The data come from the RNA Mapping Database (RMDB), library OK2TRN. The record gives the reactivity of an RNA of 177 nucleotides to 2A3 and DMS. DMS adducts were read by reverse transcription with MarathonRT. For DMS, 3,336 sequencing reads were counted. 2A3 adducts were read by reverse transcription with SuperScript II with manganese. Values cover nucleotides 27 to 126.

[RMDB]
RNA sequence: GGGAACGACUCGAGUAGAGUCGAAAAUGGGAGGCUGGGCCACACUGGUGCCCACACUGAGGCUUGGCCCGGGCUGCAUGCACUGCAGGCACUACAUGGCGGACCGUCUCCUGGGCGUGGUCUCGAGCCGUCAUAACCUGUUCGCAGGUUAUGACGGAAAAGAAACAACAACAACAAC
Reactivity to 2A3 in 0.01 (KOAc 150mM, MgCl2 10mM, bicine 150mM(pH8.5), 24C), signal-to-noise 2, nucleotides 027 to 126: u120g010g040g000a000g020g010c070u040g060g010g050c040c010a040c030a030c080u110g050g030u080g040c000c010c000a010c020a000c030u040g010a020g000g000c000u050u120g180g020c000c000c000g000g010g000c030u020g040c000a050u150g110c110a030c160u050g000c000a020g000g040c020a040c100u160a030c050a150u220g080g000c000g060g000a080c060c020g050u030c010u030c010c000u000g000g000g030c030g010u040g020g000u000c020u020c030g010a000g050
Reactivity to DMS in 0.01 (KOAc 150mM, MgCl2 10mM, bicine 150mM(pH8.5), 24C), signal-to-noise 3, nucleotides 027 to 126: u010g010g000g010a070g000g020c050u000g030g000g010c010c020a050c100a070c260u000g020g040u000g000c000c020c020a080c140a060c150u010g010a110g010g000c020u000u000g020g030c000c020c010g000g000g010c080u000g000c060a030u010g010c200a160c160u000g020c020a070g000g010c030a040c090u010a060c170a090u020g000g010c030g000g010a080c060c060g010u000c030u010c020c060u000g020g010g030c060g020u010g000g010u000c010u000c030g020a100g010